This 177-nucleotide RNA was probed chemically with 2A3 and DMS. Values cover nucleotides 27 to 126. Conditions: 150 mM KOAc, 10 mM MgCl2 and 150 mM bicine (pH 8.5), 24 C. For DMS the reverse transcriptase was MarathonRT. High 2A3 reactivity points to a flexible backbone, as in loops and unpaired stretches.
[RMDB]
RNA sequence: GGGAACGACUCGAGUAGAGUCGAAAAUAAUUUGACUCAACGCGGGACAACUUACCAGGGCCAGUUGUAUGACGAAUCUUUGAUGAGUACGACUAAGUGGUGCAUGGCCGUUCACAACAUGUGAGGUCCAUGGAUCGACAUUCGUGUCGAUCCAUGGAAAAGAAACAACAACAACAAC
Reactivity to 2A3 in 0.01 (KOAc 150mM, MgCl2 10mM, bicine 150mM(pH8.5), 24C), signal-to-noise 3, nucleotides 027 to 126: u250a030a170u040u030u070g010a010c000u000c010a020a000c010g000c020g000g000g010a050c010a080a020c080u150u250a050c000c000a040g000g000g040c020c020a030g010u020u010g000u020a030u100g080a030c100g060a090a050u040c100u100u200u160g140a180u150g000a020g100u040a010c010g020a010c020u060a180a060g080u030g070g000u030g010c030a070u090g040g000c000c020g020u040u000c040a020c000a100a100c030a080u100g060u020g050a020g080g000u010
Reactivity to DMS in 0.01 (KOAc 150mM, MgCl2 10mM, bicine 150mM(pH8.5), 24C), signal-to-noise 1, nucleotides 027 to 126: u090a090a040u000u000u000g000a130c000u000c020a080a000c020g050c000g050g000g000a090c010a060a210c140u000u040a100c070c010a130g000g000g030c060c000a070g030u020u000g040u000a060u000g020a100c190g010a040a070u020c180u000u060u020g030a000u020g050a230g010u020a020c060g000a020c020u010a050a140g000u000g000g050u000g000c090a060u020g000g000c010c000g070u020u050c070a000c000a230a130c280a050u040g010u000g000a040g010g000u030